[RMDB]
RNA sequence: GGGAACGACUCGAGUAGAGUCGAAAACGGCACCUACUGCACCGACUACCUGACCGAUGGCGCCGUACCGGACUGGUUCGUGGAGUCAUGGCCACGAGGCAAGCAGCUGGCGGCCAAGCUCGUCAAAGCCGGGCUGUGGGAGGUCGCCGACGACGGCUCCUCAUGAAUGGUUCGCCAUUCAUGAGGAAAAAGAAACAACAACAACAAC
Reactivity to 2A3 in 0.01 (KOAc 150mM, MgCl2 10mM, bicine 150mM(pH8.5), 24C), signal-to-noise 1, nucleotides 027 to 156: c020g030g010c000a020c040c000u060a070c000u010g010c060a140c120c030g000a040c000u120a160c000c010u000g000a020c020c150g130a140u110g020g000c030g000c030c000g000u000a080c020c000g080g040a110c000u100g130g280u110u000c000g050u020g020g000a060g020u080c140a100u090g050g030c000c000a000c000g000a000g080g000c070a110a150g030c060a000g000c030u020g120g000c000g050g000c070c080a040a000g030c000u020c030g000u000c060a170a090a030g000c000c000g050g050g000c040u040g000u030g020g000g000a070g040g010u070c140g000c070c000g000a040c040g000a000c020g010g050c030

This 207-nucleotide RNA was probed chemically with 2A3. The 2A3 profile rests on 637 reads.